[RMDB]
RNA sequence: GGGAACGACUCGAGUAGAGUCGAAAAUUGCAAAAAAGCUAAGCCGGCGGGCAGAGGAAAACGCCUGUAGCCGGCGAGUGAAGACGAACCAUCGACUGCCGUGUUCCUUUUCCUCUUGGAGGUUGGAUCACUAUUACGUCUUCGGACGUAAUAGUGAAAAAGAAACAACAACAACAAC
Reactivity to DMS in 0.01 (KOAc 150mM, MgCl2 10mM, bicine 150mM(pH8.5), 24C), signal-to-noise 1, nucleotides 027 to 126: u000u020g000c040a000a070a130a100a130a170g010c010u000a100a190g010c030c010g000g010c000g010g010g040c020a090g020a100g030g000a080a070a070a170c160g000c050c000u000g000u000a200g000c010c030g030g000c010g010a010g000u000g020a090a080g010a040c030g000a080a070c060c020a040u000c100g000a060c060u000g000c040c020g000u020g010u000u000c020c020u000u000u000u000c020c010u020c040u000u000g000g000a040g010g020u000u000g020g020a140
Conditions: 150 mM KOAc, 10 mM MgCl2 and 150 mM bicine (pH 8.5), 24 C.
This 177-nucleotide RNA was probed chemically with DMS.
Reactivities are given for positions 27 through 126.
DMS adducts were read by reverse transcription with MarathonRT.